[RMDB]
Overview: This 177-nucleotide RNA was probed chemically with 2A3 and DMS. It was measured as part of the RMDB library OK2TST. For 2A3 the reverse transcriptase was SuperScript II with manganese. The reactions ran in a buffer of 150 mM KOAc, 10 mM MgCl2 and 150 mM bicine (pH 8.5), at 24 C. The DMS profile rests on 6,501 reads. Values cover nucleotides 27 to 126.
RNA sequence: GGGAACGACUCGAGUAGAGUCGAAAAGGGUGAAGAAGUGAACUUCGACUGGCAUCUUCUAUUAAAUGGGUAUUACUAUAGCCCUGUUGAUCUUGAGGUUGAGGAUAUCUUUGAGAUAGUGAAUCAGCUUUAUCGAAGGUUUCGACCUUCGAUAAAGAAAAGAAACAACAACAACAAC
Reactivity to 2A3 in 0.01 (KOAc 150mM, MgCl2 10mM, bicine 150mM(pH8.5), 24C), signal-to-noise 3, nucleotides 027 to 126: g060g000g010u090g010a080a020g050a070a000g070u100g070a090a070c020u030u020c020g050a030c040u030g030g020c020a020u020c000u140u000c040u060a110u090u170a130a130a040u110g010g000g040u070a080u110u120a110c060u060a070u110a130g020c000c000c000u020g060u060u090g000a040u040c040u050u080g040a020g010g030u050u080g030a040g060g010a030u020a020u070c060u030u060u090g080a140g020a040u050a050g080u080g050a020a090u080c040a010g080
Reactivity to DMS in 0.01 (KOAc 150mM, MgCl2 10mM, bicine 150mM(pH8.5), 24C), signal-to-noise 5, nucleotides 027 to 126: g010g000g020u000g010a080a090g020a050a080g010u000g010a120a100c040u000u000c050g000a080c060u000g010g020c060a060u010c030u010u000c030u000a090u010u000a030a130a070u000g000g010g010u000a070u010u000a090c120u010a070u010a180g000c020c000c000u000g020u000u000g010a070u000c070u010u000g010a200g000g010u000u000g010a080g000g000a080u010a060u000c030u000u000u000g000a100g010a050u000a070g010u000g000a090a100u000c080a120g010